[RMDB]
RNA sequence: GGGAACGACUCGAGUAGAGUCGAAAAUGGAACUAAGGAAUAACUUUUUUCGCAUAUAGUUUUCUGCGAAUAGUUGAAAGGAAUCACACUUACCCAAGAUCGAGCAAUGUCGAGGUAAGUUGGAGAUCACUACCGCUACUUUCGAGUAGCGGUAGUGAAAAGAAACAACAACAACAAC
Reactivity to DMS in 0.01 (KOAc 150mM, MgCl2 10mM, bicine 150mM(pH8.5), 24C), signal-to-noise 1, nucleotides 027 to 126: u010g010g040a080a080c040u010a030a030g010g050a050a060u070a090a030c040u010u000u020u000u000u000c010g020c000a030u030a090u020a140g000u000u030u000u000c050u060g010c040g000a040a040u000a020g000u020u000g010a030a070a090g020g000a030a050u010c020a040c100a020c020u010u000a020c000c040c160a080a180g000a050u010c110g020a020g000c250a170a080u020g000u020c000g050a100g000g000u000a000a000g000u010u000g000g000a070g000a040u000
Reactivity to 2A3 in 0.01 (KOAc 150mM, MgCl2 10mM, bicine 150mM(pH8.5), 24C), signal-to-noise 1, nucleotides 027 to 126: u050g000g000a000a000c170u140a140a070g000g080a090a090u090a000a020c020u000u110u000u080u110u110c000g000c000a000u170a000u120a300g230u090u100u150u130c080u000g000c000g010a000a010u000a050g000u000u060g020a070a050a050g180g010a150a060u000c010a000c000a000c020u000u000a000c000c010c020a040a000g040a070u070c110g020a000g180c000a120a270u130g040u080c000g050a020g070g010u000a000a000g000u000u050g040g050a210g000a070u120
Structure probing data (DMS and 2A3) for a 177-nucleotide construct. The 2A3 profile rests on 321 reads. For DMS the reverse transcriptase was MarathonRT. 2A3 adducts were read by reverse transcription with SuperScript II with manganese. Source: RMDB libraries RFM100 and RFMREP, as collected in RNAgym. Conditions: 150 mM KOAc, 10 mM MgCl2 and 150 mM bicine (pH 8.5), 24 C.